About this RNA:
Chemical mapping of a 177-nucleotide RNA with DMS and 2A3. Reactivities are given for positions 27 through 126. The DMS profile rests on 1,540 reads. For 2A3, 2,276 sequencing reads were counted. It was measured as part of the RMDB library OK2TRN.
RNA sequence: GGGAACGACUCGAGUAGAGUCGAAAAGAAAUGAAGGUACCUCAUGUAUUUGACACAGUUGCACCAACUACCACAACUGUUCCGUUAGACCAAACACAACUGCUUGACGAACUAGUGGAAGUGCCAGCGUACUCUAGCGAUUCGUCGCUAGAGUACGAAAAGAAACAACAACAACAAC
Reactivity to DMS in 0.01 (KOAc 150mM, MgCl2 10mM, bicine 150mM(pH8.5), 24C), signal-to-noise 3, nucleotides 027 to 126: g030a100a120a110u000g010a140a070g000g020u060a040c030c070u000c050a060u010g020u000a090u000u000u010g030a050c100a040c080a040g030u020u000g030c030a070c130c090a060a140c160u000a060c060c030a100c030a050a090c130u020g020u000u000c040c040g000u000u000a050g000a090c070c100a060a040a070c170a050c140a040a100c100u000g000c020u000u000g000a060c040g030a040a050c030u010a090g010u000g000g030a070a110g030u010g020c040c070a090g020
Reactivity to 2A3 in 0.01 (KOAc 150mM, MgCl2 10mM, bicine 150mM(pH8.5), 24C), signal-to-noise 3, nucleotides 027 to 126: g060a020a100a010u120g050a090a010g010g010u060a060c010c070u060c040a060u110g090u120a140u070u100u120g060a030c030a010c010a090g050u080u030g060c080a060c050c020a090a080c060u130a110c040c040a030c010a080a040c030u030g030u050u040c020c020g020u000u060a000g000a080c060c000a040a100a030c070a000c010a030a150c030u020g000c010u050u100g020a040c080g040a150a080c020u010a000g010u020g000g030a040a020g020u020g060c040c040a010g030